[RMDB]
RNA sequence: GGGAACGACUCGAGUAGAGUCGAAAAUAAGCACCUCGUUAGGUGAGGCGGCUACACGAACAUAGGCCACUGACCCCGAACGUCGAGAGACGCCCCGGGUCAGGACAGCUCUUCCCGGCUUAAGAGUAAAAUCACAACGUCUUCGGACGUUGUGAAACCCUAAUGAUAGAUUCGUCUAUCAUUAGGGAAAAGAAACAACAACAACAAC
Reactivity to DMS in 0.01 (KOAc 150mM, MgCl2 10mM, bicine 150mM(pH8.5), 24C), signal-to-noise 1, nucleotides 027 to 156: u000a040a020g000c010a100c000c010u030c040g040u000u020a120g030g010u000g010a060g020g050c040g020g000c000u000a100c070a150c080g010a090a100c090a130u000a090g010g030c000c010a180c040u000g000a070c010c000c010c040g010a070a040c000g020u000c000g000a300g000a300g020a010c010g020c000c000c040c160g000g000g030u000c010a030g000g000a030c060a070g000c020u010c040u010u000c000c000c020g000g000c050u000u000a050a110g030a130g000u010a040a060a060a080u000c000a030c010a000a000c000g000u000c000u000u000c200g020g000a000c010g000u000u000g000u000g000a010a020a050
Reactivity to 2A3 in 0.01 (KOAc 150mM, MgCl2 10mM, bicine 150mM(pH8.5), 24C), signal-to-noise 2, nucleotides 027 to 156: u140a020a030g010c000a020c030c010u040c070g080u100u300a110g030g100u170g060a020g000g040c090g030g020c020u070a040c040a020c130g090a160a010c050a150u170a120g030g020c020c010a050c020u000g010a010c010c030c010c030g050a050a010c010g000u010c010g000a030g000a020g000a170c000g030c000c030c000c020g000g000g000u000c000a000g000g000a000c010a020g000c000u040c030u050u010c000c000c000g010g000c020u120u140a140a030g070a010g140u080a030a060a040a120u020c000a000c000a000a000c000g000u020c000u000u040c010g110g000a000c000g000u000u000g010u000g000a010a000a000